[RMDB]
RNA sequence: GGGAACGACUCGAGUAGAGUCGAAAACGGAGCCAAAGUAUCGCCAAGUGGGCAGGCUCCCGGGGCGCCGCACGGGCGCAGUGCUGCGCGAGACUCUAGGCCCGUGACAUGUCACGGACAAAUUCCGUGACCGUGUUAGGCCCUCAUUAAAGAGCGUCAAGCGAUAACUGUUCGCAGUUAUCGCUUGAAAAGAAACAACAACAACAAC
Reactivity to 2A3 in 0.01 (KOAc 150mM, MgCl2 10mM, bicine 150mM(pH8.5), 24C), signal-to-noise 1, nucleotides 027 to 156: c010g000g000a010g010c000c030a030a080a060g220u130a150u210c050g020c010c030a240a150g160u220g080g040g000c040a020g000g000c000u020c000c000c000g020g000g020g020c040g010c000c020g000c000a000c000g030g050g000c100g000c070a000g030u000g030c030u020g030c010g020c030g010a020g020a000c080u060c010u050a100g000g030c010c030c010g050u100g040a000c000a010u060g030u000c000a000c000g040g000a060c100a060a200a080u150u000c030c030g000u000g000a000c000c010g040u040g020u040u000a010g020g020c000c000c000u040c000a060u100u240a270a090a000g040a010g000c030g000u000